Description
The record gives the reactivity of an RNA of 207 nucleotides to 2A3. Reactivities are given for positions 27 through 156. Source: RMDB library RNAMAK, as collected in RNAgym. For 2A3, 999 sequencing reads were counted. 2A3 adducts were read by reverse transcription with SuperScript II with manganese.
RNA sequence: GGGAACGACUCGAGUAGAGUCGAAAAAGGAUCUCUUCGGAGAUCCUAAAAAAACCUUUGUGAUUGCAAUCGCAACAGCCUACUGAGGCCCAUUGGGCCUCGUAGGACAUGCGAUAAGCAAUCACUCUGGUAAAAAACGGCGACUUCGGUCGCCGAACUUCAGUGUAAAGUUCGCUUUACACUGAAGAAAAGAAACAACAACAACAAC
Reactivity to 2A3 in 0.01 (KOAc 150mM, MgCl2 10mM, bicine 150mM(pH8.5), 24C), signal-to-noise 1, nucleotides 027 to 156: a010g000g000a000u010c010u020c000u070u100c250g030g000a000g000a010u000c000c000u000a000a000a000a000a000a000a000c010c000u020u010u010g010u000g000a000u010u000g020c000a080a030u020c000g000c000a000a060c060a160g110c000c000u040a070c050u270g010a010g000g000c040c030c090a250u250u300g000g000g000c010c000u010c000g000u000a010g000g010a020c000a010u030g000c000g000a000u020a030a050g010c000a000a010u000c000a000c010u000c000u020g040g000u060a090a110a030a030a000a000c030g000g000c030g000a010c040u070u080c230g110g000u010c010g000c070c000g000a000a020